Annotation:
The data come from the RNA Mapping Database (RMDB), library VIROID. Chemical mapping of a 207-nucleotide RNA with 2A3.
RNA sequence: GGGAACGACUCGAGUAGAGUCGAAAAGGCAAGAGGCGGCAGUCCUCAGUGCUCUUACUCUUUUCUGUAAAGAGGAGACUGCUGGACUCGCCGCCCGUGUCCGAGCAUGAGCCAAUUCCGAACGAGAGGAACGCGUUCGGAGGGAUCAGCGCCGGAGCUAUAUCCGCGUCUUCGGACGCGGAUAUAGAAAAGAAACAACAACAACAAC
Reactivity to 2A3 in 0.01 (KOAc 150mM, MgCl2 10mM, bicine 150mM(pH8.5), 24C), signal-to-noise 1, nucleotides 027 to 156: g120g000c070a120a050g080a110g100g000c010g000g000c030a010g000u020c010c010u020c000a040g000u100g190c030u000c020u090u300a300c000u080c000u000u030u110u130c220u300g300u300a000a000a000g030a000g010g000a000g000a000c000u040g050c020u000g010g000a010c020u020c040g000c020c000g000c000c000c000g000u010g010u000c010c000g000a040g010c030a020u010g000a000g000c030c000a050a150u130u000c000c010g020a030a000c010g020a010g040a060g300g250a190a070c170g000c000g030u040u000c000g000g000a000g000g030g000a030u050c030a040g020c020g000c120c010g020g010a020g110